The record gives the reactivity of an RNA of 177 nucleotides to DMS and 2A3. For DMS the reverse transcriptase was MarathonRT. Reactivities are given for positions 27 through 126. For 2A3 the reverse transcriptase was SuperScript II with manganese.
RNA sequence: GGGAACGACUCGAGUAGAGUCGAAAAGAUAUGGAGAGAGGGAGAAUGAUAUCGGAAACGAUAUACCAUUCGAGGAUCUCUUCUCCUAAGUCAAAUCUUACGUAUAUGUUCGCAUAUACGUAAGAAAGUAUAAACCCCAGUUCGCUGGGGUUUAUACAAAAGAAACAACAACAACAAC
Reactivity to DMS in 0.01 (KOAc 150mM, MgCl2 10mM, bicine 150mM(pH8.5), 24C), signal-to-noise 2, nucleotides 027 to 126: g000a050u000a300u010g010g000a020g000a070g000a010g000g010g010a050g020a010a010u000g000a080u000a000u000c000g000g000a080a080a240c010g000a020u010a010u000a080c300c010a000u000u000c000g020a110g000g000a040u000c000u000c000u000u010c000u000c000c010u000a040a060g020u010c030a090a090a120u000c000u000u000a000c010g010u000a000u000a010u010g000u000u010c250g000c000a000u000a010u000a000c010g010u000a000a010g000a020a020a070
Reactivity to 2A3 in 0.01 (KOAc 150mM, MgCl2 10mM, bicine 150mM(pH8.5), 24C), signal-to-noise 1, nucleotides 027 to 126: g020a060u090a020u070g000g000a030g000a000g000a000g010g000g000a000g000a030a000u040g000a000u000a000u020c000g010g000a090a030a040c000g000a000u020a010u000a140c160c020a010u000u040c050g050a190g050g010a000u000c020u040c000u200u090c010u020c020c000u040a210a030g080u040c010a070a020a120u000c000u020u000a010c020g000u010a000u000a010u010g020u020u090c300g000c150a000u020a000u000a000c000g000u000a000a000g000a000a010a000